[RMDB]
RNA sequence: GGGAACGACUCGAGUAGAGUCGAAAACUGCUAGCUCCACUUUCGCCCUCGCGGCCUGAGUAGAGACCAACUAGCCGUCAGCCUGGGAGUUCCUCCGGCCCAGGAUCUGGCGUCGACAGGAGGAUCACCGUCCCACCCGGUCGCGGGGUAGGUCGGGACCAAAAUUGUACUUCGGUACAAUUUUGGUAAAAGAAACAACAACAACAAC
Reactivity to 2A3 in 0.01 (KOAc 150mM, MgCl2 10mM, bicine 150mM(pH8.5), 24C), signal-to-noise 2, nucleotides 027 to 156: c020u020g000c000u000a020g000c010u000c000c010a000c000u010u030u010c010g000c000c010c040u160c200g050c250g030g000c000c000u040g000a010g000u010a030g010a000g030a040c050c050a050a080c020u010a010g010c010c000g000u010c000a010g010c000c000u010g020g000g000a000g020u090u050c000c000u000c000c000g020g000c000c000c000a000g010g000a020u080c010u000g010g020c020g050u130c040g090a100c110a150g010g000a000g000g000a010u040c040a020c010c010g020u030c010c000c000a010c000c000c020g110g140u270c100g100c080g120g000g000g020u030a030g010g000u010c010g000g000g020

Overview: Source: RMDB library RSTRND, as collected in RNAgym. Chemical mapping of a 207-nucleotide RNA with 2A3. The reactions ran in a buffer of 150 mM KOAc, 10 mM MgCl2 and 150 mM bicine (pH 8.5), at 24 C. For 2A3, 1,914 sequencing reads were counted.